[RMDB]
RNA sequence: GGGAACGACUCGAGUAGAGUCGAAAAGCUUAGAGACGACCUAGCACCAGAUACUAUCCACGCUCUCAUCACCGAAGGGAGAACCUCGGGAUGGGACCAAUUAGGUUACGUGGAUUUUAAGGACAGGGGGUUCAUAAGUCUUCGGACUUAUGAACCCAAAAGAAACAACAACAACAAC
Reactivity to 2A3 in 0.01 (KOAc 150mM, MgCl2 10mM, bicine 150mM(pH8.5), 24C), signal-to-noise 2, nucleotides 027 to 126: g030c010u070u050a030g010a010g060a090c050g000a050c020c020u030a000g000c030a020c040c000a000g000a190u030a050c030u060a000u000c000c000a000c010g000c000u000c000u000c000a000u010c000a120c300c000g060a110a180g030g000g000a050g240a300a300c000c000u000c000g000g000g000a000u050g000g010g000a000c000c000a070a150u300u300a140g000g020u000u010a000c000g000u000g000g000a000u010u010u010u010a090a040g000g100a000c000a060g180g030
Conditions: 150 mM KOAc, 10 mM MgCl2 and 150 mM bicine (pH 8.5), 24 C.
An RNA of 177 nucleotides, treated with 2A3 and read out base by base.
The 2A3 profile rests on 472 reads.
As a SHAPE reagent, 2A3 marks flexible, mostly unpaired nucleotides at the ribose 2'-OH.
2A3 adducts were read by reverse transcription with SuperScript II with manganese.